[RMDB]
RNA sequence: GGGAACGACUCGAGUAGAGUCGAAAACACGCUCUGGUGCCAAGACGUAUGGUGACAUCGUUAUAAAAUCUUUUGCCUAGACUCGUUCUAGAGCAGAUAAGACAACCUCAACAGAAAUGAAGAGGUGGAUCUCUUAUUGCUUCGGCAAUAAGAGAUCAAAAGAAACAACAACAACAAC
Reactivity to 2A3 in 0.01 (KOAc 150mM, MgCl2 10mM, bicine 150mM(pH8.5), 24C), signal-to-noise 7, nucleotides 027 to 126: c050a000c020g000c020u030c010u040g010g030u060g010c030c010a080a060g190a100c050g120u180a100u120g020g020u030g020a020c000a030u300c080g040u060u060a120u090a110a070a030a050u030c020u020u060u030u020g000c010c000u000a000g000a010c020u040c290g130u300u000c040u010a000g000a020g000c000a000g020a050u170a030a020g050a020c030a020a030c020c010u010c010a040a050c000a040g060a040a070a050u050g030a030a000g000a000g010g000u010g010
Reactivity to DMS in 0.01 (KOAc 150mM, MgCl2 10mM, bicine 150mM(pH8.5), 24C), signal-to-noise 3, nucleotides 027 to 126: c110a050c040g030c020u000c020u020g000g000u020g020c030c020a050a140g000a070c210g040u030a070u010g000g000u000g000a090c030a040u020c020g010u020u000a100u070a080a060a090a080u040c030u010u000u010u000g010c000c000u000a020g000a010c040u020c300g000u040u000c000u000a000g000a190g020c000a010g010a060u010a020a060g000a030c150a150a060c010c000u000c010a030a300c020a000g020a110a060a050u000g000a000a270g030a010g000g020u000g000